Chemical mapping of a 177-nucleotide RNA with 2A3 and DMS.

[RMDB]
RNA sequence: GGGAACGACUCGAGUAGAGUCGAAAAACGACCGGUACGCCGGUCGAACCUGGGCUCUAGCAGCACAGAAAUAUUGGCACAGGGAAGCGAGUCUGCCAAUAUUGGCUGUGCUGCUCCAGGCAGGGAACAGUGUGUGAAGCUUCGGCUUCACACACUGAAAAGAAACAACAACAACAAC
Reactivity to 2A3 in 0.01 (KOAc 150mM, MgCl2 10mM, bicine 150mM(pH8.5), 24C), signal-to-noise 3, nucleotides 027 to 126: a020c010g000a000c000c010g000g010u090a090c300g100c030c000g020g000u000c000g000a000a010c000c000u020g030g060g030c030u080c000u180a000g000c000a000g000c000a000c000a010g000a000a000a000u010a000u000u030g000g020c040a040c060a110g110g070g130a120a080g150c090g030a040g160u050c060u030g000c000c000a000a010u010a000u000u030g160g070c010u000g000u010g000c000u000g000c000u000c000c020a000g000g000c010a000g070g030g000a030a130
Reactivity to DMS in 0.01 (KOAc 150mM, MgCl2 10mM, bicine 150mM(pH8.5), 24C), signal-to-noise 2, nucleotides 027 to 126: a100c020g000a010c020c000g000g010u000a000c300g040c000c000g000g010u000c000g000a010a040c020c010u000g000g000g000c040u000c240u010a010g000c020a010g000c000a010c000a000g010a300a010a000u000a000u000u000g000g050c000a070c100a270g000g000g000a180a200g080c160g000a170g020u000c200u030g000c040c000a000a000u000a000u000u000g000g000c000u000g010u000g070c020u000g010c020u020c000c010a030g000g020c110a270g020g030g000a150a190

Overview
The data come from the RNA Mapping Database (RMDB), library RFM100. For DMS the reverse transcriptase was MarathonRT. DMS (dimethyl sulfate) methylates the pairing face of unpaired adenines and cytosines. Conditions: 150 mM KOAc, 10 mM MgCl2 and 150 mM bicine (pH 8.5), 24 C. Values are in units of 0.01, from 0 to 300, in steps of 10.